[RMDB]
RNA sequence: GGGAACGACUCGAGUAGAGUCGAAAAAAACAAUUUGUUUAGUUUUAGCAUGGCUAAAUUGUUGAAGACCCUUACACGAUAAACGUAUAGCGUCUGAAUUCUCAUUUAACAAUGCGGCUGGCAAACAUAGGUUAGAGAAGUUCGCUUCUCUAACCUAAAAAGAAACAACAACAACAAC
Reactivity to DMS in 0.01 (KOAc 150mM, MgCl2 10mM, bicine 150mM(pH8.5), 24C), signal-to-noise 1, nucleotides 027 to 126: a060a040a020c050a070a070u010u000u010g010u010u000u000a090g010u000u000u000u000a120g010c010a060u020g000g000c000u000a020a060a010u010u000g000u000u000g000a140a040g000a080c000c020c020u010u000a070c070a030c070g000a120u000a100a100a090c070g010u000a010u030a040g000c300g010u000c000u010g010a100a170u000u000c070u000c040a060u000u000u000a050a010c060a070a010u000g010c250g000g000c070u000g000g000c020a010a010a030c130a160